[RMDB]
RNA sequence: GGGAACGACUCGAGUAGAGUCGAAAAUUGGCCCCUGGAUGGUCCAGAAGUGUCCCAUUAGGUGUUAGCUAGAUAUAGAGUUUGGGGUUCCAAGCACAACCCAGAAGUGCAACAGAUAUGACUAUGCCAGAUUUCAGGGCAGCAGGGAUUGGGGAUAAGGAUUACUCGUAUUCGUACGAGUAAUCCUAAAAGAAACAACAACAACAAC
Reactivity to DMS in 0.01 (KOAc 150mM, MgCl2 10mM, bicine 150mM(pH8.5), 24C), signal-to-noise 1, nucleotides 027 to 156: u020u000g020g000c040c010c010c000u000g000g060a140u000g040g000u000c020c030a110g000a100a080g000u010g000u010c000c000c000a210u000u010a060g060g020u000g010u000u000a090g030c020u010a090g030a180u000a080u000a100g000a150g000u000u000u000g020g020g030g020u000u010c010c030a120a210g010c070a030c020a070a130c020c030c020a130g020a060a140g000u000g010c020a060a170c060a090g000a120u020a090u010g010a060c070u000a070u010g010c010c020a140g000a110u000u010u000c050a120g000g030g000c000a050g020c010a090g000g010g020a140u020u000g020g000g000g030a080u010a090
Reactivity to 2A3 in 0.01 (KOAc 150mM, MgCl2 10mM, bicine 150mM(pH8.5), 24C), signal-to-noise 1, nucleotides 027 to 156: u030u080g060g000c040c000c000c000u040g110g050a070u020g020g070u090c060c010a000g060a160a000g170u000g040u070c000c010c040a070u020u060a040g030g020u010g010u080u000a050g010c070u030a060g040a070u070a060u040a160g110a070g070u080u070u100g010g000g000g000u110u080c030c050a050a020g040c000a010c000a040a060c030c000c070a030g040a250a010g030u060g050c010a100a010c000a020g020a030u090a010u100g050a020c060u080a080u100g070c000c000a030g020a140u100u090u040c040a000g000g040g000c000a030g020c020a020g000g010g070a070u030u040g010g000g000g000a000u060a170
This 207-nucleotide RNA was probed chemically with DMS and 2A3.
For DMS, 2,013 sequencing reads were counted.
The RNA was probed in 150 mM KOAc, 10 mM MgCl2 and 150 mM bicine (pH 8.5) at 24 C.
Reactivities are rounded to 0.1 and cut off at 0 and 3.
Source: RMDB library OK3TST, as collected in RNAgym.
For 2A3, 517 sequencing reads were counted.
2A3 adducts were read by reverse transcription with SuperScript II with manganese.